[RMDB]
RNA sequence: GGGAACGACUCGAGUAGAGUCGAAAAAGAAGCGAUAACCACUGAAUCAGAGAAGAACUCCCACGUCCCAUUUAACAGGUCGUUGAAGUUGCGGCCGGUCGUGAUGACUUCUCCGCCAGAAGAUAGGCGUUACUGCCCACUUCGGUGGGCAGUAACGAAAAGAAACAACAACAACAAC
Reactivity to DMS in 0.01 (KOAc 150mM, MgCl2 10mM, bicine 150mM(pH8.5), 24C), signal-to-noise 1, nucleotides 027 to 126: a000g010a110a070g000c010g010a090u010a080a130c030c020a130c040u000g010a050a050u010c070a130g010a080g010a040a010g000a160a160c120u000c030c090c030a090c000g000u000c030c000c110a140u010u000u010a050a140c200a110g030g010u010c000g000u000u000g000a090a150g010u000u000g010c030g000g000c020c010g000g010u000c010g050u000g000a080u010g020a070c000u000u000c100u010c010c010g000c040c050a180g000a080a060g000a060u030a130g010g030